This 207-nucleotide RNA was probed chemically with 2A3 and DMS. The data come from the RNA Mapping Database (RMDB), library M2RFPK. The RNA was probed in 150 mM KOAc, 10 mM MgCl2 and 150 mM bicine (pH 8.5) at 24 C. 2A3 adducts were read by reverse transcription with SuperScript II with manganese. Reactivities are given for positions 27 through 156.
RNA sequence: GGGAACGACUCGAGUAGAGUCGAAAACAGAGCUGAUGGGACAUGUACCUAUCCAAAAUGAGAUCCCAUCUUGCACACUGUGCUAAUUUGAGAUUCUCAUGCCUCCUACUUGGAGAGAUCUGGACUACUAACUGUAUGACGUUCGCGUCAUACAGAAGGGACAAGAUAUCUUCGGAUAUCUUGUCCCAAAAGAAACAACAACAACAAC
Reactivity to 2A3 in 0.01 (KOAc 150mM, MgCl2 10mM, bicine 150mM(pH8.5), 24C), signal-to-noise 4, nucleotides 027 to 156: c030a000g020a020g040c070u090g020a030u000g010g010g000a010c050a150u270g050u160a160c000c020u060a050u050c030c050a060a110a030a090u050g010a020g000a020u020c010c010c010a000u000c020u000u070g000c020a030c020a070c130u170g000u030g040c030u120a080a120u030u070u070g030a030g010a050u260u050c010u010c000a020u070g010c010c010u030c000c010u100a300c120u100u200g000g010a000g000a010g000a040u020c030u090g030g020a030c030u080a030c000u030a210a130c000u010g000u000a000u000g000a000c000g010u030u000c110g010c000g120u010c000a000u000a010c000a000g000a000a030
Reactivity to DMS in 0.01 (KOAc 150mM, MgCl2 10mM, bicine 150mM(pH8.5), 24C), signal-to-noise 1, nucleotides 027 to 156: c050a100g060a040g010c040u010g040a050u000g000g020g070a240c050a190u000g000u000a080c040c010u000a100u000c060c050a060a050a090a050u000g000a010g000a050u020c000c000c000a000u010c050u000u000g030c020a040c020a210c190u040g050u000g000c000u000a030a010u010u000u000g010a040g000a090u000u000c000u020c020a080u000g000c050c010u000c000c000u030a040c130u000u020g010g000a030g010a110g010a020u000c050u000g000g000a150c050u000a070c300u000a110a230c000u000g020u000a000u000g000a010c020g060u000u000c300g020c090g040u010c000a020u010a020c000a000g030a020a080